[RMDB]
RNA sequence: GGGAACGACUCGAGUAGAGUCGAAAACUUGCGACUUACACGUAGGGCGAGGGGUGGGCGAAAGUUGCCAUGAGACCGUAACUUUCGUAGUCAUUGAUAAAGGGACAGGUCUCGCUCUUUUGUCAUUUUAAUCUCUAACAGUUCGCUGUUAGAGAAAGGCUUUUAACUACUUCGGUAGUUAAAAGCCAAAAGAAACAACAACAACAAC
Reactivity to 2A3 in 0.01 (KOAc 150mM, MgCl2 10mM, bicine 150mM(pH8.5), 24C), signal-to-noise 2, nucleotides 027 to 156: c000u030u080g000c020g040a050c070u100u260a040c210a010c190g020u020a100g050g000g030c130g050a130g010g010g040g050u260g000g000g060c010g000a010a010a000g000u030u010g030c070c060a130u170g010a050g000a040c020c010g000u000a000a000c000u000u000u060c030g000u020a010g100u070c040a060u100u280g040a040u130a100a090a000g000g000g020a020c040a060g020g090u020c010u000c000g000c000u030c000u030u010u030u090g070u080c000a030u000u000u030u250a030a030u000c010u000c000u000a000a000c000a000g000u060u080c080g150c120u020g000u000u000a000g000a000g000a000a000a000